[RMDB]
RNA sequence: GGGAACGACUCGAGUAGAGUCGAAAAUGGAUCGAGCAGCGGCUGUCGCGGGGGACUUUGGUCUUGAGGGCAUUCGAGUGCCCAGACUAACCAGUCCUUUCGACAAGCCCCCGACUCCGCGGAAGGAGGUAAGAAGAGGUUUCGACCUCUUCUUACCAAAAGAAACAACAACAACAAC
Reactivity to DMS in 0.01 (KOAc 150mM, MgCl2 10mM, bicine 150mM(pH8.5), 24C), signal-to-noise 4, nucleotides 027 to 126: u000g020g000a110u000c050g020a100g030c210a080g030c190g030g020c030u000g000u000c000g000c300g000g000g000g010g000a010c010u000u010u000g000g020u000c020u000u010g010a140g010g000g000c000a020u000u010c300g010a210g010u000g000c000c000c000a080g010a030c020u000a030a020c220c250a010g000u000c000c010u010u000u010c000g000a000c010a030a140g020c000c000c030c010c030g010a070c100u000c010c020g030c180g010g010a090a100g020g010a200
Reactivity to 2A3 in 0.01 (KOAc 150mM, MgCl2 10mM, bicine 150mM(pH8.5), 24C), signal-to-noise 2, nucleotides 027 to 126: u120g010g020a020u030c020g010a020g090c100a030g050c090g090g000c020u030g000u050c000g000c140g020g000g010g020g020a000c020u000u010u050g000g000u040c000u060u180g230a200g020g010g000c030a000u190u260c250g120a120g190u000g010c000c010c000a000g020a000c000u020a030a020c050c010a010g000u020c000c000u020u020u020c000g000a000c020a050a020g000c020c000c000c010c000g030a040c080u020c020c010g020c040g050g060a040a070g070g090a040